The record gives the reactivity of an RNA of 177 nucleotides to 2A3 and DMS. 2A3 adducts were read by reverse transcription with SuperScript II with manganese. The reactions ran in a buffer of 150 mM KOAc, 10 mM MgCl2 and 150 mM bicine (pH 8.5), at 24 C.
RNA sequence: GGGAACGACUCGAGUAGAGUCGAAAAGCGGCAGACUCCUUUUCCCGCCAAGAACUUAUAGACCAGGAGAAAGAACUCCUUGAGAAGUUGGCGUGGCGAACAGAGGCAGUCUUAGCGACGGACGUCAGGGAAUUCUUACUUUCGAGUAAGAAUUCCCAAAAGAAACAACAACAACAAC
Reactivity to 2A3 in 0.01 (KOAc 150mM, MgCl2 10mM, bicine 150mM(pH8.5), 24C), signal-to-noise 3, nucleotides 027 to 126: g050c030g070g000c020a000g000a000c030u020c010c000u010u010u060u080c000c000c010g030c010c000a020a030g130a200a040c010u080u110a060u140a250g130a100c020c060a010g010g000a020g040a040a120a000g100a070a150c000u000c000c000u000u040g090a080g030a190a070g040u020u030g020g000c040g110u160g050g010c110g040a040a050c090a130g020a010g020g000c120a010g000u000c000u010u010a050g020c000g060a050c010g090g000a020c070g000u130c030a020
Reactivity to DMS in 0.01 (KOAc 150mM, MgCl2 10mM, bicine 150mM(pH8.5), 24C), signal-to-noise 2, nucleotides 027 to 126: g040c040g020g040c170a000g040a000c020u030c000c010u010u000u050u050c030c060c000g040c020c020a080a060g000a040a100c040u000u010a050u020a210g000a210c280c260a000g030g020a040g000a120a220a230g000a150a150c010u000c000c000u000u030g000a080g060a030a060g000u000u000g000g030c040g050u060g000g020c300g010a080a070c290a010g000a030g030g070c090a010g020u000c030u000u000a170g010c000g000a140c010g030g010a060c040g020u010c010a260